Source information: The record gives the reactivity of an RNA of 170 nucleotides to 2A3 and DMS. It was measured as part of the RMDB library 15KLIB. DMS adducts were read by reverse transcription with MarathonRT. Values are in units of 0.01, from 0 to 300, in steps of 10. High 2A3 reactivity points to a flexible backbone, as in loops and unpaired stretches. The DMS profile rests on 59,417 reads.
RNA sequence: GGGAACGACUCGAGUAGAGUCGAAAAGGAGAUUCAGUUCUCUUGCAAGGCCAUUCUCUAGCUAAGAAUAUCCUGCAUGUCGUAGGCCCAGAUGCCCGCGCUAAACAGGAUGUUUCUCUCCUUAGUACCAGCUUUAUCUUCGGAUAAAGCAAAAGAAACAACAACAACAAC
Reactivity to 2A3 in 0.01 (KOAc 150mM, MgCl2 10mM, bicine 150mM(pH8.5), 24C), signal-to-noise 9, nucleotides 027 to 129: g020g010a010g010a010u110u080c060a050g300u100u020c040u000c000u030u060g030c040a080a080g040g010c040c020a080u180u030c050u010c020u090a050g030c030u110a100a010g010a020a010u020a010u030c000c000u000g010c040a050u080g110u160c010g010u020a020g000g000c000c020c040a090g030a090u210g010c000c000c010g000c000g000c020u080a090a080a040c020a010g000g010a000u010g030u000u090u020c070u000c010u010c010c000u010u020a020g020u040a070c020c040a010
Reactivity to DMS in 0.01 (KOAc 150mM, MgCl2 10mM, bicine 150mM(pH8.5), 24C), signal-to-noise 9, nucleotides 027 to 129: g000g020a040g000a000u020u040c210a040g120u040u040c020u000c060u000u000g030c080a060a040g000g060c130c080a110u070u030c040u030c030u010a090g000c050u010a060a030g010a060a010u020a000u000c010c010u040g050c010a300u010g050u090c030g040u000a050g020g030c000c040c140a180g010a080u090g030c000c010c020g010c010g020c030u050a020a120a170c020a000g030g000a000u020g020u010u010u010c040u000c040u030c050c030u000u000a000g020u000a110c040c080a000